[RMDB]
RNA sequence: GGGAACGACUCGAGUAGAGUCGAAAAGCGGAGAUGUUCGCAUCUCCGCAAAUCCCUGGAUGCAGCGAGUUAAAACGGAUACGUUGGCAAGUAUCGAUCGCAAAAGUAUUAGCUUCGGCUAAUACAAGGUAGUUCUACAGUUCGCUGUAGAACUACCAAAAGAAACAACAACAACAAC
Reactivity to DMS in 0.01 (KOAc 150mM, MgCl2 10mM, bicine 150mM(pH8.5), 24C), signal-to-noise 2, nucleotides 027 to 126: g010c000g000g030a030g010a020u000g010u000u010c170g030c010a030u000c000u010c010c000g030c000a010a050a080u000c010c000c000u000g000g020a120u010g020c190a110g030c020g020a040g010u010u000a050a050a070a060c300g020g000a050u010a010c020g010u020u020g040g010c170a060a150g000u010a010u000c020g000a090u000c060g000c070a050a090a130a130g000u000a000u000u000a000g000c000u000u000c180g030g010c000u020a000a010u000a020c000a100a090
Reactivity to 2A3 in 0.01 (KOAc 150mM, MgCl2 10mM, bicine 150mM(pH8.5), 24C), signal-to-noise 2, nucleotides 027 to 126: g000c000g000g000a030g010a010u020g030u070u110c150g020c050a000u010c010u000c000c000g000c000a010a000a000u000c010c000c000u020g100g060a070u100g040c090a060g000c030g060a010g000u120u220a020a070a050a050c060g070g000a010u020a030c040g050u170u180g130g000c080a100a040g010u000a000u020c040g040a080u040c030g000c040a040a060a030a100g010u000a000u000u000a000g000c010u030u050c190g040g000c000u010a000a000u000a010c000a000a030